RNA sequence: GGGAACGACUCGAGUAGAGUCGAAAAGCCGUGCUCGAGAGGGAGCAGAAAAUCCAGAGCUAUCCCGUCGUUUCGCUAAACAAAUGCGAAACGACAAAUUGCGUUACAUACGCAAUCCUCUAAUGAACUCUGAUGUAUGCUUCGGCAUACAUCAGAGAAAAGAAACAACAACAACAAC
Reactivity to 2A3 in 0.01 (KOAc 150mM, MgCl2 10mM, bicine 150mM(pH8.5), 24C), signal-to-noise 2, nucleotides 027 to 126: g010c000c010g060u030g010c000u010c010g100a070g000a020g030g040g000a000g000c000a010g160a000a180a000a020u100c060c030a030g000a000g010c010u020a060u080c000c000c010g000u000c000g000u000u010u000c010g000c020u040a120a290a110c020a050a100a030u120g000c010g000a010a010a000c000g020a000c000a010a070a010u010u010g010c000g000u040u070a210c060a120u290a050c040g010c000a000a040u010c010c010u010c020u080a110a160u140g060a090a020
Reactivity to DMS in 0.01 (KOAc 150mM, MgCl2 10mM, bicine 150mM(pH8.5), 24C), signal-to-noise 2, nucleotides 027 to 126: g000c020c020g010u010g010c010u000c000g010a030g000a060g000g000g040a030g020c000a060g000a100a060a160a110u050c090c150a120g000a110g020c020u000a160u010c000c050c010g070u020c020g010u000u000u000c000g000c030u010a030a060a200c300a070a100a060u000g010c000g000a000a000a020c000g010a000c000a000a020a030u000u000g020c010g000u010u010a170c290a160u010a020c000g020c010a030a010u000c010c000u000c010u000a060a120u000g010a080a150
Annotation: An RNA of 177 nucleotides, treated with 2A3 and DMS and read out base by base. Conditions: 150 mM KOAc, 10 mM MgCl2 and 150 mM bicine (pH 8.5), 24 C. The 2A3 profile rests on 2,499 reads.